This 170-nucleotide RNA was probed chemically with 2A3 and DMS. High DMS reactivity at an A or C suggests that its Watson-Crick edge is free. For DMS, 23,360 sequencing reads were counted.
[RMDB]
RNA sequence: GGGAACGACUCGAGUAGAGUCGAAAACUGAAGGGUGGUCUUAUUUUAAAGUUUGACUCUGGCACCGUUAGCAAGACUUCAGACUGGAAGUGCAAGGUGACAGAUGUACUUUUCCCCGGCCAAAAAUUGAGAAAGAUCUUCGGAUCUUUCAAAAGAAACAACAACAACAAC
Reactivity to 2A3 in 0.01 (KOAc 150mM, MgCl2 10mM, bicine 150mM(pH8.5), 24C), signal-to-noise 8, nucleotides 027 to 129: c030u030g050a050a020g090g010g020u030g010g000u020c040u040u160a200u130u160u030u100a060a070a030g000u020u040u070g040a010c000u000c000u000g000g000c010a010c030c030g060u050u050a020g000c040a120a040g060a080c000u010u000c000a130g020a300c170u240g130g010a030a010g010u030g040c030a040a030g000g000u000g000a000c000a000g010a010u080g010u010a040c010u000u000u000u020c000c000c010c020g020g000c000c000a020a040a010a020a060u100u180g030a020
Reactivity to DMS in 0.01 (KOAc 150mM, MgCl2 10mM, bicine 150mM(pH8.5), 24C), signal-to-noise 6, nucleotides 027 to 129: c040u000g000a030a070g030g000g020u020g000g000u000c050u000u070a120u040u040u030u030a030a050a030g000u000u020u030g000a050c120u000c000u020g000g000c010a030c040c000g040u000u000a230g040c020a170a110g020a260c060u000u000c000a180g000a160c250u030g060g020a040a030g020u000g060c020a060a190g010g030u020g000a030c040a020g010a040u000g020u050a040c030u000u020u030u020c020c000c010c080g000g000c000c110a010a070a050a060a080u050u020g030a300

Conditions: 150 mM KOAc, 10 mM MgCl2 and 150 mM bicine (pH 8.5), 24 C. DMS adducts were read by reverse transcription with MarathonRT. The data come from the RNA Mapping Database (RMDB), library 15KLIB.